[RMDB]
RNA sequence: GGGAACGACUCGAGUAGAGUCGAAAAGAUAUGGACUGCAGGGAGCCUUACAUCGGAAACGAUGUACAGGCGAAGAACUGUGUCCUAAGUCAAAAUCAUUCAAUCUUGUUCGCAAGAUUGAAUGAAACUAGUUAACAUUCUUCGGAAUGUUAACUAGAAAAGAAACAACAACAACAAC
Reactivity to 2A3 in 0.01 (KOAc 150mM, MgCl2 10mM, bicine 150mM(pH8.5), 24C), signal-to-noise 5, nucleotides 027 to 126: g010a000u010a000u050g000g000a010c060u300g000c060a010g020g000g000a010g000c000c000u000u000a000c000a000u010c000g010g010a000a010a000c010g010a010u010g000u010a030c150a040g000g000c010g030a090a000g000a000a000c010u010g010u010g000u010c000c000u000a020a000g000u000c020a030a030a000a300u040c000a000u000u000c010a000a010u000c000u020u040g050u100u150c300g040c120a000a000g000a010u010u000g000a000a000u000g000a010a000a000
Reactivity to DMS in 0.01 (KOAc 150mM, MgCl2 10mM, bicine 150mM(pH8.5), 24C), signal-to-noise 6, nucleotides 027 to 126: g000a020u000a050u000g000g000a010c010u010g070c000a000g000g000g000a040g020c000c000u000u000a000c000a000u000c000g030g010a020a010a020c000g020a010u000g000u010a000c300a000g010g010c000g010a080a110g010a090a230c020u000g000u000g000u000c000c000u000a010a100g000u010c010a090a060a110a150u000c000a010u000u000c000a000a000u000c000u000u000g010u000u020c210g020c010a010a010g000a010u000u000g000a000a000u000g000a020a080a160
Structure probing data (2A3 and DMS) for a 177-nucleotide construct. For DMS, 12,353 sequencing reads were counted. The RNA was probed in 150 mM KOAc, 10 mM MgCl2 and 150 mM bicine (pH 8.5) at 24 C. Values cover nucleotides 27 to 126.